[RMDB]
RNA sequence: GGGAACGACUCGAGUAGAGUCGAAAACAGGUCGAUAGUACCAAUAACCCUGGUACCAAUAAGGUACUAUCGACCAUUUAGCUCUUCUUCUACAACACGCUCGCUGAAGAAGAGCGUUUCAGGUACCAGGGAAGCGAGCGCAAGGCCGAGAGGCCGACAGGCAGUACUCAUUCGUGAGUACUGCCUGAAAAGAAACAACAACAACAAC
Reactivity to 2A3 in 0.01 (KOAc 150mM, MgCl2 10mM, bicine 150mM(pH8.5), 24C), signal-to-noise 1, nucleotides 027 to 156: c020a030g000g030u000c000g030a000u010a000g040u000a020c000c000a080a160u140a160a180c020c000c000u020g000g000u000a010c000c000a060a140u160a170a120g000g000u000a000c000u000a000u000c000g010a010c000c000a000u000u040u130a000g000c000u000c010u010u000c000u010u000c050u070a070c030a270a030c050a040c120g010c000u020c000g000c010u030g000a000a000g000a000a000g000a000g000c000g010u070u160u090c030a000g000g000u000a000c000c000a000g010g000g000a000a000g000c000g010a000g020c000g040c070a070a070g000g000c000c000g040a060g030a060g010g000c000c000g040a000
Source: RMDB library OK3TST, as collected in RNAgym. An RNA of 207 nucleotides, treated with 2A3 and read out base by base.